Structure probing data (2A3) for a 207-nucleotide construct.
[RMDB]
RNA sequence: GGGAACGACUCGAGUAGAGUCGAAAACCUCACUACAUUUUACUGUUCCUAAAGAAUUUGUGACAGGUACAGUAAAACGUAUUGCAAGGUUUAUCAGUCCCUAUAAACAGGUAAAUAACAAUAUAUGAAAAGCAAAGACUGUUCGCAGUCUUUGCAACGGCGAACCUAGGUUCGCCUAGGUUCGCCGAAAAGAAACAACAACAACAAC
Reactivity to 2A3 in 0.01 (KOAc 150mM, MgCl2 10mM, bicine 150mM(pH8.5), 24C), signal-to-noise 1, nucleotides 027 to 156: c000c000u000c000a000c000u000a020c000a080u000u020u000u020a000c020u000g000u040u120c000c000u080a050a140a100g080a130a260u160u240u300g220u090g060a080c030a030g000g000u000a000c000a000g000u000a000a000a000a000c000g000u000a000u000u010g010c060a040a040g000g070u020u020u020a060u160c040a010g090u030c020c000c050u080a050u040a110a090a000c080a070g000g070u070a130a110a000u240a130a190c100a090a030u110a000u070a040u260g100a100a100a000a000g000c000a010a000a010g000a000c000u000g010u020u080c250g000c130a000g000u000c000u000u000u000g000c000a000a000
The 2A3 profile rests on 510 reads.